[RMDB]
RNA sequence: GGGAACGACUCGAGUAGAGUCGAAAAAAUGGAUUCGUCCAUUGGGUUCACCUUUGUGAUUACGGAGCGUACUACCCACCCGAAUUGGAUCCCAUUGGGAUCCAACUCGGAGGUACGUUAAGUAAUCACUCUGGUAUAUAAACAUGUUCGCAUGUAAUAUUCACCUCUAAUUCGUUAGAGGUGAAUAAAAAGAAACAACAACAACAAC
Reactivity to 2A3 in 0.01 (KOAc 150mM, MgCl2 10mM, bicine 150mM(pH8.5), 24C), signal-to-noise 4, nucleotides 027 to 156: a000a010u030g000g010a020u060u100c240g050u010c100c010a010u020u040g120g020g060u080u110c070a030c010c000u010u010u000g000u010g000a000u000u010a010c020g010g060a030g010c000g010u000a010c010u050a060c030c070c060a050c010c000c000g010a010a010u010u000g000g010a000u010c000c020c150a300u130u300g000g000g000a000u000c000c000a000a000c000u000c000g000g000a000g000g000u000a000c000g000u000u000a020a000g000u000a000a010u000c000a000c000u000c000u000g000g060u020a060u020a020u060a150a210a010c010a010u020g060u130u100c210g020c150a000u050g050u130a110a040
Reactivity to DMS in 0.01 (KOAc 150mM, MgCl2 10mM, bicine 150mM(pH8.5), 24C), signal-to-noise 3, nucleotides 027 to 156: a020a020u010g000g010a070u000u000c220g030u000c020c000a070u000u000g000g010g030u000u010c100a090c020c010u000u000u020g000u000g010a030u000u000a020c010g020g030a240g000c000g000u020a020c010u000a030c030c020c090a300c190c010c010g000a020a010u000u000g010g000a020u000c000c000c020a300u010u010g070g050g020a010u000c010c010a010a000c000u000c000g000g000a160g020g000u000a010c000g020u000u000a050a300g020u010a010a020u000c000a000c000u000c030u000g000g060u000a120u000a100u000a130a130a070c020a050u000g000u010u000c150g010c020a050u000g020u000a080a290